The record gives the reactivity of an RNA of 170 nucleotides to DMS and 2A3. The RNA was probed in 150 mM KOAc, 10 mM MgCl2 and 150 mM bicine (pH 8.5) at 24 C. The DMS profile rests on 8,854 reads. Values are in units of 0.01, from 0 to 300, in steps of 10. Source: RMDB library 15KLIB, as collected in RNAgym.

[RMDB]
RNA sequence: GGGAACGACUCGAGUAGAGUCGAAAAUUGAGAAUAAAACCACUUUGCCUACUAAUAUAGCUUUUGAACUCUAUGCUAAGCGUGCUGUACGCUCGCAUCCCGAUUUCAAAUUGCUACACAAUUUACAUAACUACGCUCUUCGGAGCGUAGAAAAGAAACAACAACAACAAC
Reactivity to DMS in 0.01 (KOAc 150mM, MgCl2 10mM, bicine 150mM(pH8.5), 24C), signal-to-noise 4, nucleotides 027 to 129: u070u040g010a140g010a140a030u030a010a010a020a020c060c080a000c060u020u070u010g010c030c040u000a060c140u040a000a000u080a160u020a040g030c020u050u010u010u040g000a000a040c010u030c030u020a030u040g010c000u090a090a070g040c020g060u020g100c210u040g000u040a030c060g030c030u040c300g030c000a040u050c140c090c110g010a050u000u000u000c050a020a020a040u080u030g010c030u020a120c170a010c150a010a120u000u000u000a040c130a080u070a080a160
Reactivity to 2A3 in 0.01 (KOAc 150mM, MgCl2 10mM, bicine 150mM(pH8.5), 24C), signal-to-noise 6, nucleotides 027 to 129: u060u040g010a010g050a090a090u080a040a060a000a030c020c000a050c030u070u110u080g040c020c020u090a110c010u030a110a120u120a050u010a080g030c010u010u000u000u000g000a000a000c000u010c020u000a000u040g000c000u030a040a040g010c000g050u060g080c130u190g050u090a000c020g000c000u000c000g000c020a000u030c040c060c020g020a010u000u030u010c000a010a030a060u040u040g000c010u050a010c060a000c010a030a020u050u100u120a060c060a050u150a050a060